Annotation: Conditions: 150 mM KOAc, 10 mM MgCl2 and 150 mM bicine (pH 8.5), 24 C. Structure probing data (DMS and 2A3) for a 177-nucleotide construct. The DMS profile rests on 1,533 reads. The data come from the RNA Mapping Database (RMDB), library OK1LIB.

RNA sequence: GGGAACGACUCGAGUAGAGUCGAAAAGAGCAUUCAACUGUUCAUCAAGGGCAAGCAGGCGGACAGAGAAGCAGCUCGGGUAAUAUCACCUCGUCGGCAGGGAUGGUUGAUGCCGGUGGACGCACCAGAGAUAAGUCGCAUUCGUGCGACUUAUCUCAAAAGAAACAACAACAACAAC
Reactivity to DMS in 0.01 (KOAc 150mM, MgCl2 10mM, bicine 150mM(pH8.5), 24C), signal-to-noise 1, nucleotides 027 to 126: g040a130g000c050a050u000u000c090a060a110c050u000g000u010u000c000a110u000c110a070a010g030g000g000c010a120a100g060c040a120g000g020c030g000g000a040c080a150g030a240g010a120a090g000c020a100g030c030u000c160g000g040g000u000a030a000u080a150u020c040a050c080c000u000c000g000u000c000g000g010c000a030g000g040g000a010u000g080g030u010u000g010a020u050g000c060c040g060g060u050g030g000a090c080g000c060a030c010c020a210
Reactivity to 2A3 in 0.01 (KOAc 150mM, MgCl2 10mM, bicine 150mM(pH8.5), 24C), signal-to-noise 3, nucleotides 027 to 126: g040a020g000c030a030u060u060c060a140a050c140u020g020u030u000c010a030u050c050a180a190g080g000g070c010a050a020g000c030a070g110g000c040g000g010a010c000a020g040a020g030a070a000g050c060a010g050c010u040c000g000g020g000u120a130a060u070a030u230c080a050c000c000u020c020g060u000c010g000g020c010a050g030g040g090a040u060g040g000u120u080g030a050u050g050c010c010g010g000u010g000g040a040c070g010c060a000c010c010a030